[RMDB]
RNA sequence: GGGAACGACUCGAGUAGAGUCGAAAAAAGACGCCGACCACCCUGCCCCAGGCGACACCGAACGGUGCAGCGCCCUGGCAUGUUCGGGCGGGCGCCUUCGCCAUCGACGUGCUGCCCGGGCUCGCCGGGACCUCGCUGGAUUCGUCCAGCGAGGUCCAAAAGAAACAACAACAACAAC
Reactivity to 2A3 in 0.01 (KOAc 150mM, MgCl2 10mM, bicine 150mM(pH8.5), 24C), signal-to-noise 2, nucleotides 027 to 126: a000a000g130a030c080g030c020c000g010a020c000c010a010c010c030c010u030g020c040c030c000c000a020g070g020c010g060a020c030a010c030c030g180a140a090c100g030g010u020g060c050a000g090c000g040c010c000c010u010g030g030c040a040u180g050u050u090c070g000g000g000c010g000g000g000c020g010c000c030u110u120c040g000c030c030a080u120c040g000a000c010g030u110g050c010u000g020c010c020c040g000g020g000c020u020c050g020c000c000g020